[RMDB]
RNA sequence: GGGAACGACUCGAGUAGAGUCGAAAAGUCGCCGCGUCUACAUCAACGCCCAGCGCGGGCGAGGGAAGCGUCCUACGGGGGUGACCCAUUCGCCGGCAUGGUAGAGGACGGCAAGAUUGCCGCGACGGCGGGAUUUAGUAUUCGUACUAAAUCCCGCAAAAGAAACAACAACAACAAC
Reactivity to DMS in 0.01 (KOAc 150mM, MgCl2 10mM, bicine 150mM(pH8.5), 24C), signal-to-noise 3, nucleotides 027 to 126: g010u000c010g050c010c270g030c020g000u010c010u000a090c090a090u010c050a130a130c060g000c070c020c030a100g000c140g010c070g010g000g010c000g020a050g000g000g010a080a300g000c010g000u000c000c000u010a080c180g020g010g000g010g030u010g010a260c010c000c010a100u000u010c040g030c010c020g000g020c040a070u000g000g020u000a090g000a150g010g000a060c020g010g030c100a070a070g000a040u010u020g050c000c180g000c020g000a030c060g000
Reactivity to 2A3 in 0.01 (KOAc 150mM, MgCl2 10mM, bicine 150mM(pH8.5), 24C), signal-to-noise 2, nucleotides 027 to 126: g000u010c000g000c020c010g000c000g020u000c020u030a090c000a110u090c020a100a050c050g030c030c010c010a070g080c300g100c100g250g000g000c000g000a010g020g030g030a090a010g040c050g270u100c010c000u030a090c130g100g000g000g000g000u030g020a020c020c000c030a140u110u070c000g000c000c000g030g070c040a050u050g030g000u080a060g010a030g090g070a010c010g010g000c000a000a000g050a060u150u280g010c000c000g020c020g010a020c010g040